Chemical mapping of a 207-nucleotide RNA with 2A3 and DMS.

RNA sequence: GGGAACGACUCGAGUAGAGUCGAAAAACGCUGGGUCGAGCUAACAAAGCCGAGGAUCUAUAUGAAGAAGUACUGAAGCGCGCACGGUACGUAAAGUAUAGGGAGGCUUUGGACCCUCGACCUGUGCUGAAGCGCGCACGGCAACCGAAAGGUGCGACUCUUCAGAUGAGUUCGCUCAUCUGAAGAGAAAAGAAACAACAACAACAAC
Reactivity to 2A3 in 0.01 (KOAc 150mM, MgCl2 10mM, bicine 150mM(pH8.5), 24C), signal-to-noise 1, nucleotides 027 to 156: a000c040g000c070u180g030g040g000u000c010g000a000g020c010u040a070a010c010a000a000a010g000c010c000g060a300g000g020a000u000c010u000a010u000a000u010g020a040a300g020a030a000g020u010a000c010u040g050a150a050g020c000g000c010g000c000a000c000g000g000u000a000c010g010u010a000a000a010g000u000a000u010a010g000g000g000a010g000g000c000u010u000u000g010g000a010c000c020c010u000c000g020a000c000c000u000g010u020g000c010u010g020a090a060g000c000g000c000g000c000a010c010g020g000c040a040a050c010c000g000a080a020a030g030g000u050g040c010g080a080
Reactivity to DMS in 0.01 (KOAc 150mM, MgCl2 10mM, bicine 150mM(pH8.5), 24C), signal-to-noise 1, nucleotides 027 to 156: a170c030g000c010u000g010g020g020u050c000g000a010g070c090u000a110a300c030a000a010a030g000c010c000g000a080g050g030a030u000c000u000a050u000a000u000g050a130a240g000a070a170g060u030a000c040u000g000a130a040g030c030g070c030g000c020a300c000g000g050u000a000c010g000u000a040a110a300g000u000a010u000a060g000g070g070a040g040g040c030u030u000u000g000g030a150c130c130c000u000c000g000a020c000c040u010g020u000g000c010u000g000a070a010g050c000g000c000g030c000a300c070g000g000c000a130a180c000c000g010a140a190a130g010g000u000g010c020g000a190
The reactions ran in a buffer of 150 mM KOAc, 10 mM MgCl2 and 150 mM bicine (pH 8.5), at 24 C.